The record gives the reactivity of an RNA of 177 nucleotides to DMS and 2A3. The data come from the RNA Mapping Database (RMDB), library OK2TST.

RNA sequence: GGGAACGACUCGAGUAGAGUCGAAAAGUGGACGGCUCAGCCUGCCUGUGUCCCGUUACUCUGGCCUCGUCCUUCAGGCCAGGCAGCCUGUGGCCACUCCAUGCUGAAAGGGGUUUACCUUGGCCACCCUCCAUAACGUUUUCGAACGUUAUGGAGGAAAAGAAACAACAACAACAAC
Reactivity to DMS in 0.01 (KOAc 150mM, MgCl2 10mM, bicine 150mM(pH8.5), 24C), signal-to-noise 5, nucleotides 027 to 126: g030u000g000g010a040c200g020g000c010u000c040a040g010c220c040u000g010c030c010u010g010u000g010u010c020c020c040g010u020u010a070c170u010c110u000g010g000c010c080u010c150g000u000c060c050u000u010c090a050g010g010c010c010a010g000g000c050a020g000c190c010u000g000u010g010g020c010c000a130c160u000c030c030a030u000g020c080u000g000a070a100a070g000g000g000g000u010u010u020a080c080c050u000u000g010g010c020c050a090c120
Reactivity to 2A3 in 0.01 (KOAc 150mM, MgCl2 10mM, bicine 150mM(pH8.5), 24C), signal-to-noise 4, nucleotides 027 to 126: g060u070g010g010a020c030g000g000c010u020c050a000g010c010c030u040g020c010c000u070g050u050g080u180c050c020c010g000u050u090a090c070u050c050u150g000g020c020c060u090c100g130u150c020c000u030u110c040a020g000g000c010c000a000g000g030c000a010g020c000c010u060g010u140g040g000c000c000a010c000u000c010c010a060u120g050c060u130g110a060a050a090g050g030g000g020u050u140u090a130c020c020u030u050g030g010c000c010a030c000